An RNA of 177 nucleotides, treated with 2A3 and DMS and read out base by base.
Reactivities are rounded to 0.1 and cut off at 0 and 3.
DMS (dimethyl sulfate) methylates the pairing face of unpaired adenines and cytosines.
Values cover nucleotides 27 to 126.
The RNA was probed in 150 mM KOAc, 10 mM MgCl2 and 150 mM bicine (pH 8.5) at 24 C.
RNA sequence: GGGAACGACUCGAGUAGAGUCGAAAACCUGAACAAUUUGCGGAAAUUGGUGUGGGUCGUAUUGUCCCCCCCUCUCCGCCAGAUUGAGGCGAGUAGGUGCGCCAGUGCCGCGUGGGUUUCGCCGGCGUGGAUCUAGAUCAUUCGUGAUCUAGAUCCAAAAAGAAACAACAACAACAAC
Reactivity to 2A3 in 0.01 (KOAc 150mM, MgCl2 10mM, bicine 150mM(pH8.5), 24C), signal-to-noise 7, nucleotides 027 to 126: c000c000u020g060a060a020c000a020a030u000u020u040g020c010g020g020a010a080a110u150u080g060g000u070g030u190g070g020g010u020c080g080u190a260u160u300g020u060c010c000c000c000c010c010c000u000c000u000c000c020g000c030c000a030g020a030u020u060g040a050g060g000c020g000a010g050u140a100g120g200u230g070c000g000c020c010a030g130u080g060c000c010g010c060g010u030g000g100g000u010u040u020c020g000c000c010g020g010c030g030
Reactivity to DMS in 0.01 (KOAc 150mM, MgCl2 10mM, bicine 150mM(pH8.5), 24C), signal-to-noise 3, nucleotides 027 to 126: c010c000u010g010a150a200c020a020a000u000u010u000g010c050g020g000a010a030a070u020u030g000g000u000g050u010g000g000g000u000c050g020u040a130u040u050g030u010c000c000c000c030c120c000c160u010c080u000c000c030g000c060c090a010g000a050u020u000g010a170g030g010c030g000a040g010u020a080g030g050u040g010c000g000c000c000a140g000u020g010c020c030g000c120g030u000g000g000g000u010u010u000c010g000c000c010g020g000c040g030